Description
Structure probing data (DMS and 2A3) for a 177-nucleotide construct. 2A3 adducts were read by reverse transcription with SuperScript II with manganese.
RNA sequence: GGGAACGACUCGAGUAGAGUCGAAAAAUUUUGACAAAGACAACUUCACCGAGCAAGACACUGAUGCUGAGCUGAUGGUGAGUGGAUGGAUUGCUGGAGAGGUAUUGAAGCAAGCAGUGAGCUGUCGCACGUUUUAGCUAUUCGUAGCUAAAACGUGAAAAGAAACAACAACAACAAC
Reactivity to DMS in 0.01 (KOAc 150mM, MgCl2 10mM, bicine 150mM(pH8.5), 24C), signal-to-noise 5, nucleotides 027 to 126: a130u010u010u000u010g020a130c090a080a110a110g000a090c060a080a060c040u010u010c030a060c020c020g010a070g020c050a110a090g010a090c040a070c110u000g010a100u000g010c020u000g010a190g020c040u010g000a080u000g010g020u000g000a050g030u000g010g010a080u000g000g010a110u010u000g000c030u000g000g010a110g000a060g010g000u000a060u010u000g000a110a060g020c050a040a050g010c040a050g010u000g010a080g010c070u000g010u000c120g000
Reactivity to 2A3 in 0.01 (KOAc 150mM, MgCl2 10mM, bicine 150mM(pH8.5), 24C), signal-to-noise 3, nucleotides 027 to 126: a000u130u130u050u130g050a040c050a040a100a010g030a040c020a070a040c060u100u080c020a030c040c030g020a010g030c020a090a000g080a070c050a000c130u110g030a100u150g020c000u060g020a040g070c040u080g020a100u120g060g060u020g020a040g010u040g000g010a020u070g030g030a030u040u090g020c030u020g020g010a080g010a030g070g030u090a090u110u170g040a030a010g030c020a020a010g000c010a020g030u020g080a040g010c030u020g030u080c050g030
It was measured as part of the RMDB library OK2TST. For DMS, 4,940 sequencing reads were counted. The reactions ran in a buffer of 150 mM KOAc, 10 mM MgCl2 and 150 mM bicine (pH 8.5), at 24 C.